Chemical mapping of a 177-nucleotide RNA with DMS and 2A3. For 2A3, 11,531 sequencing reads were counted. The reactions ran in a buffer of 150 mM KOAc, 10 mM MgCl2 and 150 mM bicine (pH 8.5), at 24 C.
[RMDB]
RNA sequence: GGGAACGACUCGAGUAGAGUCGAAAAGAUAUGGAAUGGAGGUGGUCGAGUGUUCUCGGAAACGAGACACUUAGACAACCACUCCCCACCCAUUCCUAAGUCAAAGAACGUAGUUCGCUACGUUCAACUUAAUAUCCGAGUUCGCUCGGAUAUUAAGAAAAGAAACAACAACAACAAC
Reactivity to DMS in 0.01 (KOAc 150mM, MgCl2 10mM, bicine 150mM(pH8.5), 24C), signal-to-noise 7, nucleotides 027 to 126: g020a060u010a300u000g000g010a020a010u000g000g010a070g010g020u000g010g010u000c020g000a000g010u000g000u010u000c000u010c010g010g000a090a080a170c000g010a010g010a010c000a000c000u000u000a040g020a030c030a050a020c010c000a170c250u000c020c000c000c030a300c300c010c000a010u000u000c000c000u010a080a130g000u000c090a080a100a100g000a010a010c000g010u000a000g010u000u010c210g020c000u000a000c000g000u000u000c000a070a110
Reactivity to 2A3 in 0.01 (KOAc 150mM, MgCl2 10mM, bicine 150mM(pH8.5), 24C), signal-to-noise 3, nucleotides 027 to 126: g030a030u150a110u240g000g000a020a000u010g000g030a090g090g000u030g010g000u070c040g010a010g000u020g090u270u090c010u020c000g010g030a100a070a030c020g010a010g000a000c000a000c000u010u020a200g030a030c020a010a020c010c000a030c070u060c030c010c000c010a010c010c000c000a000u010u000c000c010u030a120a030g060u050c110a190a050a110g000a010a000c000g000u000a000g020u040u080c250g010c120u000a000c000g000u000u010c010a000a000